[RMDB]
Chemical mapping of a 177-nucleotide RNA with DMS.
RNA sequence: GGGAACGACUCGAGUAGAGUCGAAAAGUGACAGACAUACUUUCUUCCUGUGGAACUCCUACUGUAGUGGAGAAGACAGACUGAAAAGUAGAAAAAUAAAGUACUAGUAAGAUCAAUAUACAGGAGGUCUUUCGACCACAUUCGUGUGGUCGAAAGAAAAAGAAACAACAACAACAAC
Reactivity to DMS in 0.01 (KOAc 150mM, MgCl2 10mM, bicine 150mM(pH8.5), 24C), signal-to-noise 1, nucleotides 027 to 126: g000u000g000a110c070a060g000a130c160a150u030a040c030u000u010u000c040u020u000c030c010u000g030u030g030g020a170a220c040u000c000c000u000a100c070u010g040u000a080g000u000g010g010a120g000a080a190g000a090c060a070g000a060c050u020g000a070a050a110a070g000u010a090g020a010a090a100a090a130u010a080a060a020g020u000a100c060u010a020g040u000a040a030g000a150u000c050a030a080u040a100u010a060c030a010g000g020a100g000g000
Conditions: 150 mM KOAc, 10 mM MgCl2 and 150 mM bicine (pH 8.5), 24 C. Reactivities are given for positions 27 through 126. The DMS profile rests on 509 reads.